[RMDB]
RNA sequence: GGGAACGACUCGAGUAGAGUCGAAAAUUCUGGGCGCCCCCGGACAAAGCCCCCAGAACCCGGUCGCUCCCUUCCCGCUAAAUCCCCUUCGGGGUCAGUGCGCUACCAGCACAGGGCCGCACGCCUCAAAAACGAUGUCUUUCGAGACAUCGUUUUUAAAAGAAACAACAACAACAAC
Reactivity to 2A3 in 0.01 (KOAc 150mM, MgCl2 10mM, bicine 150mM(pH8.5), 24C), signal-to-noise 1, nucleotides 027 to 126: u020u000c000u060g010g000g050c030g070c030c010c000c000c050g050g010a010c050a020a030a040g000c030c000c000c020c000a000g020a050a050c030c000c040g030g020u080c030g010c000u000c020c000c020u000u000c000c010c040g000c010u110a150a130a090u030c000c000c000c000u090u100c130g040g000g000g010u040c020a080g030u010g020c010g000c010u120a160c020c020a050g020c040a070c050a090g010g040g010c020c010g000c010a000c000g000c000c000u000c030
Reactivity to DMS in 0.01 (KOAc 150mM, MgCl2 10mM, bicine 150mM(pH8.5), 24C), signal-to-noise 2, nucleotides 027 to 126: u000u020c000u000g000g030g010c180g000c030c020c010c030c030g000g010a060c050a100a130a200g020c040c080c000c010c000a060g030a070a100c040c020c010g020g000u030c100g030c040u020c020c020c030u000u010c010c010c000g000c160u050a040a080a110u010c030c010c000c070u000u020c120g000g000g000g030u010c060a110g000u000g010c000g010c060u020a180c090c060a120g010c120a070c190a110g000g000g000c170c010g000c010a070c000g000c010c030u010c020